[RMDB]
Source: RMDB library OK1LIB, as collected in RNAgym. Structure probing data (DMS and 2A3) for a 177-nucleotide construct. For DMS, 2,464 sequencing reads were counted. The reactions ran in a buffer of 150 mM KOAc, 10 mM MgCl2 and 150 mM bicine (pH 8.5), at 24 C. The 2A3 profile rests on 947 reads. DMS adducts were read by reverse transcription with MarathonRT. Values are in units of 0.01, from 0 to 300, in steps of 10.
RNA sequence: GGGAACGACUCGAGUAGAGUCGAAAAUCUCUGUUACAGAGCAGUCGACAUAUUGUGACAUAUUCGAACCAGCCAAGUUGACUAGAUACGGGAAGGACUACAAAGCAUGCGGGUAUCAAGACAGUCAAAAUAGUUCGGCAUUCGUGCCGAACUAUUUAAAAGAAACAACAACAACAAC
Reactivity to DMS in 0.01 (KOAc 150mM, MgCl2 10mM, bicine 150mM(pH8.5), 24C), signal-to-noise 2, nucleotides 027 to 126: u000c000u000c000u030g000u010u050a090c030a030g000a060g030c120a100g010u010c010g000a050c140a060u030a070u000u010g000u040g000a080c110a060u010a030u010u000c070g000a140a040c110c030a060g010c020c050a050a140g020u040u000g000a060c040u000a080g010a000u010a040c110g000g000g020a090a120g000g000a020c010u020a000c080a020a120a170g000c040a030u000g010c010g000g040g020u010a020u010c050a070a070g000a060c110a070g000u010c050a020
Reactivity to 2A3 in 0.01 (KOAc 150mM, MgCl2 10mM, bicine 150mM(pH8.5), 24C), signal-to-noise 2, nucleotides 027 to 126: u000c000u000c000u020g040u050u080a160c080a020g010a000g070c040a050g060u030c020g010a050c020a040u170a030u050u140g070u100g050a060c100a140u120a070u100u120c050g020a070a050c000c000a000g080c000c000a030a050g050u000u030g080a070c020u010a040g010a200u090a030c020g000g010g020a000a070g060g010a020c000u020a030c050a050a080a030g020c000a070u100g030c050g000g080g010u030a030u100c040a050a030g070a050c000a060g050u090c110a000